Chemical mapping of a 177-nucleotide RNA with DMS and 2A3. Conditions: 150 mM KOAc, 10 mM MgCl2 and 150 mM bicine (pH 8.5), 24 C. The DMS profile rests on 9,216 reads. Values cover nucleotides 27 to 126. As a SHAPE reagent, 2A3 marks flexible, mostly unpaired nucleotides at the ribose 2'-OH. DMS adducts were read by reverse transcription with MarathonRT.

RNA sequence: GGGAACGACUCGAGUAGAGUCGAAAAGAUAUGGACUGGUGGGAGCCUCCGGGUCGGAAACGACCCUGUAGGCGACGAUCACCAGGUCCUAAGUCAAAACGACUAAGGUCUUCGGACCUUAGUCGAACACCCAUAUGUAGUUCGCUACAUAUGGGUGAAAAGAAACAACAACAACAAC
Reactivity to DMS in 0.01 (KOAc 150mM, MgCl2 10mM, bicine 150mM(pH8.5), 24C), signal-to-noise 5, nucleotides 027 to 126: g010a010u000a010u010g000g000a130c000u000g000g010u000g010g000g000a010g010c000c000u000c060c300g000g000g030u000c000g010g000a000a010a020c000g010a010c000c000c000u000g010u010a010g010g010c010g010a040c250g000a060u010c000a000c010c000a010g010g010u010c000c000u000a000a080g000u000c010a090a070a110a200c020g010a020c000u000a010a000g010g000u000c000u000u030c190g030g000a010c000c000u000u000a000g010u000c000g000a030a110
Reactivity to 2A3 in 0.01 (KOAc 150mM, MgCl2 10mM, bicine 150mM(pH8.5), 24C), signal-to-noise 3, nucleotides 027 to 126: g000a010u010a000u040g000g000a000c000u010g000g000u010g000g020g010a010g010c000c000u000c020c010g020g000g000u000c010g010g000a020a000a000c000g010a010c020c000c020u010g090u170a010g000g010c020g030a090c000g000a010u000c010a000c010c000a010g030g050u050c000c000u000a000a010g010u000c000a010a040a050a160c020g000a000c000u000a000a000g000g000u010c000u050u160c300g060g020a000c000c000u000u010a000g000u000c000g000a010a010